[RMDB]
RNA sequence: GGGAACGACUCGAGUAGAGUCGAAAACGAUCCUCGAGAGAGGAUCGACGAGUCUUCGGACUCGAUUACCGCGUAGAUGUGCCGCGGGGCUACGAUGGUAUUGUGGGAAAGAAUACCAUUGUACCUUCUUGUCGUAGCCGAACAACUCGCACGUCGAAGUGGUAAUCCUGUUCGCAGGAUUACCACUAAAAGAAACAACAACAACAAC
Reactivity to 2A3 in 0.01 (KOAc 150mM, MgCl2 10mM, bicine 150mM(pH8.5), 24C), signal-to-noise 2, nucleotides 027 to 156: c010g000a020u010c000c010u030c030g050a050g000a010g000a000g040g000a000u000c000g000a010c000g000a000g000u000c000u040u090c250g080g010a000c000u020c010g000a070u170u180a090c000c000g000c010g010u040a070g000a040u000g000u010g000c000c000g000c000g080g000g000g000c000u000a000c000g010a010u120g000g000u010a000u040u130g020u030g050g020g040a080a150a150g140a200a000u070a090c000c000a000u030u000g010u000a000c010c010u110u130c160u170u230g010u010c010g000u000a010g000c000c000g010a020a010c010a000a050c040u100c100g000c000a010c000g010u000c010g000a070
Chemical mapping of a 207-nucleotide RNA with 2A3. Reactivities are given for positions 27 through 156. The data come from the RNA Mapping Database (RMDB), library OK3TST. Conditions: 150 mM KOAc, 10 mM MgCl2 and 150 mM bicine (pH 8.5), 24 C. 2A3 is a SHAPE reagent: it acylates the 2'-hydroxyl of flexible nucleotides of all four kinds. For 2A3, 968 sequencing reads were counted.